Conditions: 150 mM KOAc, 10 mM MgCl2 and 150 mM bicine (pH 8.5), 24 C. The record gives the reactivity of an RNA of 177 nucleotides to 2A3. The 2A3 profile rests on 515 reads.

[RMDB]
RNA sequence: GGGAACGACUCGAGUAGAGUCGAAAACCGCAUUCGUCAUGGCGAUCAGAUGGCACCAGGAGAAAUAGAGCCCCUGGCCAGUGUCCUGAGUCGUAGCAGUGCAGGAGGGGAGCCCUGAAGGAGAGAGCGCAGGAGCGAUGUUCGCAUCGCUCCUGCGAAAAGAAACAACAACAACAAC
Reactivity to 2A3 in 0.01 (KOAc 150mM, MgCl2 10mM, bicine 150mM(pH8.5), 24C), signal-to-noise 1, nucleotides 027 to 126: c000c000g080c030a160u090u000c040g160u020c050a030u040g030g000c000g010a100u010c050a020g060a130u110g120g000c030a030c000c000a050g070g050a090g030a100a170a000u300a080g070a030g000c020c000c000c060u090g010g000c000c010a020g020u020g030u080c000c010u060g060a030g130u070c000g040u030a080g020c020a010g020u080g140c000a040g060g050a070g000g010g000g020a030g000c000c000c100u020g000a020a000g070g000a060g000a000g000a000g020